[RMDB]
Chemical mapping of a 207-nucleotide RNA with 2A3. For 2A3, 435 sequencing reads were counted. The reactions ran in a buffer of 150 mM KOAc, 10 mM MgCl2 and 150 mM bicine (pH 8.5), at 24 C. 2A3 adducts were read by reverse transcription with SuperScript II with manganese.
RNA sequence: GGGAACGACUCGAGUAGAGUCGAAAAAGGGUGCUUCAUGAAUGUGGUCUUCGAGGGCAGCUACUCUGCUGGUUUACUAUCUGGGAAGACUGAGGUUCAGAGGAGUUAGAAGAUUUGCCCAACCACUUCCUUUUGUUUAAGGGUCUAAUCCCAACUCCGAUUGUCACAUCUUCGGAUGUGACAAUCGAAAAGAAACAACAACAACAAC
Reactivity to 2A3 in 0.01 (KOAc 150mM, MgCl2 10mM, bicine 150mM(pH8.5), 24C), signal-to-noise 1, nucleotides 027 to 156: a000g040g000g060u120g080c090u090u030c110a120u110g100a150a030u160g030u040g030g090u020c020u140u090c070g110a110g000g060g010c000a000g040c010u010a020c040u040c010u060g070c010u040g000g150u180u170u120a040c080u040a100u140c060u070g080g120g000a060a000g080a040c030u080g020a010g010g120u030u000c000a010g060a080g040g000a000g030u120u200a040g080a110a000g020a130u110u190u300g000c020c000c020a030a080c040c040a070c000u020u040c030c000u130u100u080u010g160u190u130u090a070a060g010g000g000u010c050u110a040a100u040c000c000c030a010a010c010u000c010